Structure probing data (2A3 and DMS) for a 177-nucleotide construct. The RNA was probed in 150 mM KOAc, 10 mM MgCl2 and 150 mM bicine (pH 8.5) at 24 C. Source: RMDB library TTRINS, as collected in RNAgym. Reactivities are given for positions 27 through 126. DMS adducts were read by reverse transcription with MarathonRT.
[RMDB]
RNA sequence: GGGAACGACUCGAGUAGAGUCGAAAAGAUAUGGAAUGAACUACACUGCAUGGUGUUCGUUGAAACAUGCUAGGUCGGAAACGACCUAGCAUGUGGAGAACAUCUGUGAUGGUGCAUUCCUAAGUCACCAUUUAGUGUUGUUCGCAACACUAAAUGGAAAAGAAACAACAACAACAAC
Reactivity to 2A3 in 0.01 (KOAc 150mM, MgCl2 10mM, bicine 150mM(pH8.5), 24C), signal-to-noise 3, nucleotides 027 to 126: g020a050u090a040u190g000g000a010a000u030g000a070a030c030u120a040c160a020c140u210g040c100a150u300g010g060u030g030u020u000c070g130u270u080g000a040a010a010c000a000u000g000c010u000a000g010g010u000c020g060g030a020a120a150c020g000a010c020c000u000a000g010c000a000u000g000u000g000g000a000g000a000a000c000a010u030c010u070g040u020g080a300u110g060g000u020g010c000a000u010u000c000c000u010a130a050g040u030c000a020
Reactivity to DMS in 0.01 (KOAc 150mM, MgCl2 10mM, bicine 150mM(pH8.5), 24C), signal-to-noise 4, nucleotides 027 to 126: g020a040u000a300u010g010g020a030a020u010g000a060a020c020u000a150c090a040c070u020g000c110a080u010g020g020u000g010u000u000c000g000u000u030g000a300a150a020c000a000u000g000c010u000a010g000g020u000c000g010g000a110a090a260c020g010a010c010c000u000a000g000c000a000u000g000u000g000g000a040g010a030a000c000a000u000c010u020g020u000g000a080u020g010g000u000g000c020a020u000u000c000c000u010a050a090g000u000c040a300